[RMDB]
RNA sequence: GGGAACGACUCGAGUAGAGUCGAAAAUCUGGAGGAUACAUUACAGGCAGCAAUUACAUUACACUCCAGGCUGCCUCAUUAUCUGGCGAGAGCCAGUAUUACAGAUAGCAUGCGUAGGGAGGGACCAAGCAGGGAGGGAGGAGCAUGCGCUUGGUCACCGACCUAGCUGGUUCGCCAGCUAGGUCGGAAAAGAAACAACAACAACAAC
Reactivity to 2A3 in 0.01 (KOAc 150mM, MgCl2 10mM, bicine 150mM(pH8.5), 24C), signal-to-noise 2, nucleotides 027 to 156: u060c010u000g030g000a000g040g040a080u130a050c050a100u250u000a110c050a160g030g000c000a000g000c010a020a020u100u030a060c040a080u080u040a070c060a000c070u070c040c000a000g070g010c000u000g020c000c020u010c000a040u030u300a110u050c000u000g000g020c000g020a060g070a000g050c000c000a020g020u000a060u040u100a000c020a000g110a000u060a040g020c000a010u020g030c040g050u030a070g010g150g060a140g060g000g000a010c060c000a050a000g160c080a080g010g000g010a200g040g000g040a030g030g070a070g030c010a020u010g000c000g000c020u030u070g000g000u030c000a030